[RMDB]
RNA sequence: GGGAACGACUCGAGUAGAGUCGAAAACAACGCACCACAGCCGGGGGCAAUCGACAUCUGAUUGUCAUUAAGGAUAACAAUAACCGGUAAGCCCAUCGCCCCAAUAUGAUUAAGCGCCUCAAAGGCGAUGUGCAGGAUAGUUCGCUAUCCUGCACAUAAAAGAAACAACAACAACAAC
Reactivity to DMS in 0.01 (KOAc 150mM, MgCl2 10mM, bicine 150mM(pH8.5), 24C), signal-to-noise 3, nucleotides 027 to 126: c130a100a130c080g000c080a080c020c030a070c070a120g020c020c030g030g000g020g000g010c020a030a010u000c000g020a170c240a120u010c160u000g000a060u010u000g030u010c000a110u000u010a080a110g010g010a090u010a100a080c130a060a040u010a110a090c030c010g010g030u000a080a170g010c040c030c010a040u020c030g000c040c000c000c040a110a090u000a120u010g010a180u020u010a060a140g010c020g020c010c000u010c120a070a050a230g010g000c010g010
Reactivity to 2A3 in 0.01 (KOAc 150mM, MgCl2 10mM, bicine 150mM(pH8.5), 24C), signal-to-noise 2, nucleotides 027 to 126: c010a020a020c040g040c080a040c040c000a050c040a050g050c000c000g030g000g000g010g010c020a000a000u000c000g070a050c040a140u090c080u130g010a030u040u000g020u000c020a000u050u080a080a010g070g070a070u070a160a020c020a130a060u130a080a060c070c030g020g010u020a010a060g000c000c010c000a080u070c050g040c000c000c000c040a010a100u200a120u080g060a020u080u150a030a050g060c030g020c000c030u120c160a210a080a050g010g020c010g030
An RNA of 177 nucleotides, treated with DMS and 2A3 and read out base by base. For 2A3 the reverse transcriptase was SuperScript II with manganese. The RNA was probed in 150 mM KOAc, 10 mM MgCl2 and 150 mM bicine (pH 8.5) at 24 C. The DMS profile rests on 1,588 reads. For 2A3, 1,381 sequencing reads were counted.